RNA sequence: GGGAACGACUCGAGUAGAGUCGAAAAACACACAGGAACUUCAGUCAUCCAUCAAUAUGAUCAAGAUUGCCGUACUAGUGAUCAUCAUGAACAUCGCACAAGCCAUCGACUCACGAAGCAACAUAUUCUUAGAGCUGAUGAAUAUGUCAAGAAAUGACAGUCGCACUGGAUUCGUCCAGUGCGACUGAAAAGAAACAACAACAACAAC
Reactivity to 2A3 in 0.01 (KOAc 150mM, MgCl2 10mM, bicine 150mM(pH8.5), 24C), signal-to-noise 2, nucleotides 027 to 156: a000c110a020c030a020c020a010g100g060a110a000c030u080u020c030a090g000u000c010a060u020c020c130a020u040c110a090a060u050a030u220g010a020u000c040a000a140g030a290u010u130g080c000c010g110u100a100c090u060a130g060u030g030a010u040c030a000u040c000a030u150g040a050a020c020a090u020c080g000c040a030c000a110a030g030c020c000a010u060c020g070a030c040u000c010a020c030g050a040a010g040c040a010a020c000a000u010a010u030u000c040u040u230a050g010a070g220c170u090g080a020u040g010a040a000u040a000u000g020u010c050a090a010g050a070a120a030u150g040a000